[RMDB]
RNA sequence: GGGAACGACUCGAGUAGAGUCGAAAAGACGUUUCUCAUGAGACUUCUGACGACGAGUGGGCUGCUGCAGUUGAUGAAGCGUUCCCUCUCGAUGAAGCAGAAGAUGUUACUGAAUCUGUGCAAGAAGCUAUUUACAUUAGUUCGCUAAUGUAAAUAGAAAAGAAACAACAACAACAAC
Reactivity to DMS in 0.01 (KOAc 150mM, MgCl2 10mM, bicine 150mM(pH8.5), 24C), signal-to-noise 9, nucleotides 027 to 126: g010a130c120g010u000u000u000c020u000c060a150u000g010a130g010a140c010u000u000c000u000g000a180c060g010a100c030g010a040g010u000g000g010g040c300u010g000c010u000g000c020a040g010u010u000g010a160u000g000a040a020g010c000g000u010u000c000c000c000u000c010u000c010g010a080u000g010a140a190g010c010a020g010a030a020g000a090u000g010u000u000a110c120u000g000a110a060u000c030u000g010u000g010c120a100a080g010a100a100g010
Reactivity to 2A3 in 0.01 (KOAc 150mM, MgCl2 10mM, bicine 150mM(pH8.5), 24C), signal-to-noise 8, nucleotides 027 to 126: g060a010c040g010u020u040u000c040u010c030a060u160g070a020g040a090c000u010u000c010u020g040a060c020g000a010c010g000a000g010u030g000g010g000c030u070g000c000u030g000c040a050g020u220u170g130a170u040g020a060a000g000c000g030u120u140c000c010c000u000c000u000c000g080a100u100g040a050a020g000c000a000g000a010a010g020a020u100g040u110u090a070c050u020g040a050a070u030c030u050g060u060g070c030a040a050g010a040a010g050
This 177-nucleotide RNA was probed chemically with DMS and 2A3. The DMS profile rests on 20,374 reads. The reactions ran in a buffer of 150 mM KOAc, 10 mM MgCl2 and 150 mM bicine (pH 8.5), at 24 C. The data come from the RNA Mapping Database (RMDB), library 15KREP. Values are in units of 0.01, from 0 to 300, in steps of 10. For 2A3 the reverse transcriptase was SuperScript II with manganese. High DMS reactivity at an A or C suggests that its Watson-Crick edge is free. DMS adducts were read by reverse transcription with MarathonRT.